[RMDB]
RNA sequence: GGGAACGACUCGAGUAGAGUCGAAAAACAGAGCGAAGGGGGGACGGAGAAGGCUAUGUUGGCCGGGCGACGGUUGUCCCGGUUUAAGCGUGUAGCCUGGUUUUCCAGGCAAAUCCGGAAAAAGAAAUCACAAGAAUGUGUUCGCACAUUCUUGUGAAAAAGAAACAACAACAACAAC
Reactivity to DMS in 0.01 (KOAc 150mM, MgCl2 10mM, bicine 150mM(pH8.5), 24C), signal-to-noise 2, nucleotides 027 to 126: a060c030a090g000a040g000c040g010a070a040g000g000g000g000g010g020a090c030g000g020a060g000a130a060g010g000c030u010a060u010g020u010u000g010g000c010c000g010g000g010c300g020a090c140g020g000u020u010g000u010c020c000c000g000g010u000u010u000a060a070g000c030g000u030g010u010a180g000c000c000u010g010g010u000u010u020u010c010c000a020g000g010c010a030a020a090u010c020c020g020g020a020a060a020a100a060g000a090a050a130

An RNA of 177 nucleotides, treated with DMS and read out base by base.